[RMDB]
RNA sequence: GGGAACGACUCGAGUAGAGUCGAAAAGGGGCCGAUUAGGAUUCGACGCCGGUAACGAAACUUGAGGGGCAUGCCGAGUUGGUGGCAGAACUCGUAAAUCCACUGCUACAAACUCAUAGUUGCCAACGACGACAACUACGCUCUGGCGGCUUAAUGCGAAACUGUUCUAGUUCGCUAGAACAGUUUCAAAAGAAACAACAACAACAAC
Reactivity to 2A3 in 0.01 (KOAc 150mM, MgCl2 10mM, bicine 150mM(pH8.5), 24C), signal-to-noise 5, nucleotides 027 to 156: g020g000g010g010c030c020g030a040u100u150a050g110g000a040u070u100c040g030a020c070g030c070c030g020g040u080a100a030c050g050a120a020a040c050u070u080g010a030g040g020g000g000c020a030u070g040c020c020g000a000g000u000u010g030g010u000g000g000c000a000g010a010a020c010u010c020g070u130a000a030a030u020c040c020a080c050u000g000c000u020a010c000a020a060a020c060u090c040a070u060a100g020u010u020g000c010c000a150a080c100g080a030c000g040a020c020a100a060c100u210a080c050g000c020u010c000u020g000g000c000g000g000c000u060u090a110a010u170g040c040
Reactivity to DMS in 0.01 (KOAc 150mM, MgCl2 10mM, bicine 150mM(pH8.5), 24C), signal-to-noise 2, nucleotides 027 to 156: g010g010g060g110c030c050g020a160u000u000a110g010g000a140u000u010c070g010a100c040g030c020c020g000g030u000a050a140c070g000a100a080a100c050u000u000g020a110g030g010g040g020c040a040u000g060c110c100g010a040g030u010u000g030g060u000g010g000c000a010g000a010a100c080u000c130g020u000a090a110a090u010c040c090a140c000u000g000c020u000a040c020a040a030a050c030u010c040a120u000a020g010u000u000g000c010c020a040a130c160g000a160c000g010a070c040a030a050c060u000a040c050g020c050u000c040u010g000g040c020g010g020c020u010u000a060a050u020g020c290

Chemical mapping of a 207-nucleotide RNA with 2A3 and DMS. 2A3 adducts were read by reverse transcription with SuperScript II with manganese. The 2A3 profile rests on 4,778 reads.